[RMDB]
RNA sequence: GGGAACGACUCGAGUAGAGUCGAAAAGAUAUGGAUCCCUACAUCUCAACAGCUCGGAAACGAGACAUGAGAGGUAGUGGAUCCUAAGUCAAAGUCCGGGACAUAGCUUCGGCUAUGUCCCGGACAACAAAUGAGUGGAGUUCGCUCCACUCAUUUGAAAAGAAACAACAACAACAAC
Reactivity to DMS in 0.01 (KOAc 150mM, MgCl2 10mM, bicine 150mM(pH8.5), 24C), signal-to-noise 3, nucleotides 027 to 126: g010a040u000a300u010g000g020a010u000c000c010c000u000a020c000a040u000c000u000c000a020a070c250a200g000c020u010c000g000g000a090a070a300c000g000a020g000a030c070a220u000g000a010g000a030g000g030u000a000g020u020g030g000a000u000c000c000u010a000a050g000u000c020a080a120a090g000u010c000c000g090g000g010a020c000a010u000a020g020c010u000u030c230g010g030c000u000a000u000g000u000c030c000c010g000g000a000c000a000a080
Reactivity to 2A3 in 0.01 (KOAc 150mM, MgCl2 10mM, bicine 150mM(pH8.5), 24C), signal-to-noise 1, nucleotides 027 to 126: g050a000u110a000u180g030g000a000u000c000c000c000u000a020c000a050u000c000u010c000a110a300c060a150g010c030u010c000g030g040a050a070a020c000g020a000g080a020c030a110u090g000a020g000a000g000g030u010a020g010u300g010g000a000u000c000c000u000a030a010g070u000c050a090a230a000g040u020c030c000g040g090g020a000c010a010u030a030g100c000u130u150c300g060g030c000u040a040u000g000u000c050c040c040g030g010a000c000a010a000